[RMDB]
Chemical mapping of a 177-nucleotide RNA with DMS and 2A3. The data come from the RNA Mapping Database (RMDB), library OK1LIB. Reactivities are given for positions 27 through 126. 2A3 adducts were read by reverse transcription with SuperScript II with manganese. The RNA was probed in 150 mM KOAc, 10 mM MgCl2 and 150 mM bicine (pH 8.5) at 24 C.
RNA sequence: GGGAACGACUCGAGUAGAGUCGAAAAGAGAGUGUUGUGAUUCACUUGAAAUCGAGUGAAGUACACAACAAGGGUCCUUUAAGUAGGUCUGUGCAGAUCCAAUUCUACAGAAACAUGAGAUAGUGGCACUUCCUUCCAAAUUCGUUUGGAAGGAAGUAAAAGAAACAACAACAACAAC
Reactivity to DMS in 0.01 (KOAc 150mM, MgCl2 10mM, bicine 150mM(pH8.5), 24C), signal-to-noise 6, nucleotides 027 to 126: g010a160g010a080g000u000g020u000u000g030u010g010a090u000u000c000a010c000u000u010g010a190a160a140u060c070g010a000g000u000g000a010a000g010u040a100c010a010c000a010a010c010a040a050g010g000g000u000c010c010u000u010u020a070a090g010u010a050g000g030u000c030u000g020u010g020c090a050g000a050u020c070c070a080a100u010u000c030u020a040c100a060g010a090a080a060c210a070u020g000a100g010a080u020a040g020u000g000g000c140
Reactivity to 2A3 in 0.01 (KOAc 150mM, MgCl2 10mM, bicine 150mM(pH8.5), 24C), signal-to-noise 9, nucleotides 027 to 126: g090a000g010a020g070u050g000u000u000g000u000g020a050u000u000c000a010c010u020u010g120a220a130a170u300c100g000a000g000u010g010a010a000g060u170a060c000a000c000a000a010c000a000a030g060g000g010u040c010c000u070u090u050a180a190g070u120a070g010g070u000c040u030g100u070g050c070a020g020a100u010c040c020a040a090u080u050c030u070a110c020a050g070a110a160a020c050a090u180g030a060g060a140u110a090g090u090g050g010c030